An RNA of 177 nucleotides, treated with DMS and 2A3 and read out base by base. 2A3 adducts were read by reverse transcription with SuperScript II with manganese.

RNA sequence: GGGAACGACUCGAGUAGAGUCGAAAAGUCAGACCACACUUUAAUGUGCCACUCUGCGGAGAGUGCAGUCUGCGAUAGUGCCCCAGGUGGACUGGGUUAACAAAGGCAAAACAUCGCCCCACGCGGCGUAGUUAACGUUGUUCGCAACGUUAACUACAAAAGAAACAACAACAACAAC
Reactivity to DMS in 0.01 (KOAc 150mM, MgCl2 10mM, bicine 150mM(pH8.5), 24C), signal-to-noise 9, nucleotides 027 to 126: g020u000c000a010g000a010c000c000a010c000a060c200u040u050u090a130a160u010g010u000g010c020c000a010c010u000c010u000g000c010g000g010a190g000a010g010u000g010c000a170g000u000c000u000g010c010g010a130u020a000g000u040g000c000c000c000c000a020g000g050u010g000g000a030c000u000g000g010g000u010u060a000a260c160a000a010a020g010g010c030a080a070a120a150c250a120u030c150g010c010c000c000c030a230c270g010c110g000g010c210
Reactivity to 2A3 in 0.01 (KOAc 150mM, MgCl2 10mM, bicine 150mM(pH8.5), 24C), signal-to-noise 9, nucleotides 027 to 126: g000u000c000a000g000a000c000c000a000c000a010c020u110u160u300a230a080u150g000u000g000c000c000a000c000u000c000u000g000c000g000g000a000g000a000g000u000g000c000a000g000u000c000u000g000c000g010a010u020a010g290u300g010c000c000c000c000a000g010g030u070g040g020a010c000u000g000g000g000u010u020a000a000c000a000a010a010g080g000c020a040a060a100a060c050a160u180c110g020c000c000c010c010a080c050g110c100g090g000c050
The RNA was probed in 150 mM KOAc, 10 mM MgCl2 and 150 mM bicine (pH 8.5) at 24 C.